[RMDB]
RNA sequence: GGGAACGACUCGAGUAGAGUCGAAAAGCAUCGACGACGGUCCUGCCAUGAGACCGUAACGAGGACAUGUCGCCUCGAAUGGCGUCGGGGAGCCGGCAGCUUACCCCAAGAAUGAGCGCCUAAUGCCUAUACCCGAUUCGCUUCGGCGAAUCGGGAAUCUAAAUUUCAGGUUCGCCUGAAAUUUAGAAAAAGAAACAACAACAACAAC
Reactivity to 2A3 in 0.01 (KOAc 150mM, MgCl2 10mM, bicine 150mM(pH8.5), 24C), signal-to-noise 4, nucleotides 027 to 156: g060c010a080u130c070g060a070c010g010a000c000g020g000u010c000c020u070g110c090c040a220u210g030a080g000a090c010c010g000u010a020a030c020g000a010g000g020a030c050a140u230g040u090c070g020c010c010u010c010g030a090a130u130g020g000c000g010u050c050g010g000g000g000a000g050c070c070g060g010c030a030g010c020u040u170a230c000c020c010c010a000a030g100a070a100u160g010a050g070c010g020c010c020u060a110a040u110g010c000c010u090a100u090a150c000c000c020g000a000u000u000c000g010c010u040u040c140g100g000c000g020a010a000u000c000g010g010g000a000a000
Reactivity to DMS in 0.01 (KOAc 150mM, MgCl2 10mM, bicine 150mM(pH8.5), 24C), signal-to-noise 1, nucleotides 027 to 156: g010c040a140u000c040g010a020c000g060a080c000g030g070u010c000c000u000g020c000c300a110u000g000a120g010a000c000c060g060u010a000a080c020g020a060g030g010a280c040a100u020g050u000c070g020c030c010u000c010g010a040a120u000g000g010c040g010u000c010g010g000g020g000a100g030c040c040g000g000c010a130g000c040u000u000a040c030c000c020c070a110a230g020a120a100u000g010a100g020c050g020c010c010u000a010a030u010g040c000c050u000a120u010a070c010c010c000g000a070u000u010c010g010c030u000u010c200g050g030c050g000a000a000u000c010g010g030g000a000a000